Structure probing data (DMS and 2A3) for a 207-nucleotide construct.
2A3 adducts were read by reverse transcription with SuperScript II with manganese.
Source: RMDB library M2RFPK, as collected in RNAgym.
[RMDB]
RNA sequence: GGGAACGACUCGAGUAGAGUCGAAAAGGUAAUCCUUCACAGGAUCGUGUGGAAGUCCUGCUCGGGGCGGAAGCAUUAAAACCAUUCGAGCUAGUCAAUGCGUGGCGUGUCUCUCCGCAGCGUGUUGUGUAUGAGAGUGGAUUCGUCCACUCUCAAAUUACUUCUAUAACUUCGGUUAUAGAAGUAAAAAAGAAACAACAACAACAAC
Reactivity to DMS in 0.01 (KOAc 150mM, MgCl2 10mM, bicine 150mM(pH8.5), 24C), signal-to-noise 2, nucleotides 027 to 156: g060g010u000a080a110u000c000c000u010u000c220a110c120a080g020g010a020u000c100g020u000g050u010g010g010a300a210g010u000c000c020u010g010c090u000c090g030g000g020g020c070g010g000a280a260g070c010a080u000u000a030a120a150a100c020c030a090u000u010c070g000a110g000c090u010a170g030u000c020a040a040u030g010c030g010u000g020g010c040g020u000g020u000c060u000c020u010c080c010g050c020a070g040c010g000u000g010u000u020g010u000g010u010a090u030g030a070g000a000g000u000g000g000a040u000u010c300g010u000c000c000a000c000u000c010u000c000a020a000a080
Reactivity to 2A3 in 0.01 (KOAc 150mM, MgCl2 10mM, bicine 150mM(pH8.5), 24C), signal-to-noise 2, nucleotides 027 to 156: g070g020u090a030a020u020c000c000u120u140c060a080c000a060g080g020a070u050c060g000u010g010u030g060g050a060a020g030u000c000c000u030g030c070u060c050g040g000g040g010c010g000g000a010a000g020c010a010u030u130a020a040a010a050c000c020a020u070u110c090g020a020g040c080u120a040g230u090c030a060a010u050g000c000g040u020g020g000c030g020u040g120u020c020u010c010u020c090c010g010c030a080g000c050g010u000g000u020u010g020u020g020u020a100u150g000a010g000a000g010u000g000g010a010u020u020c160g050u010c040c000a000c010u040c000u000c000a000a000a000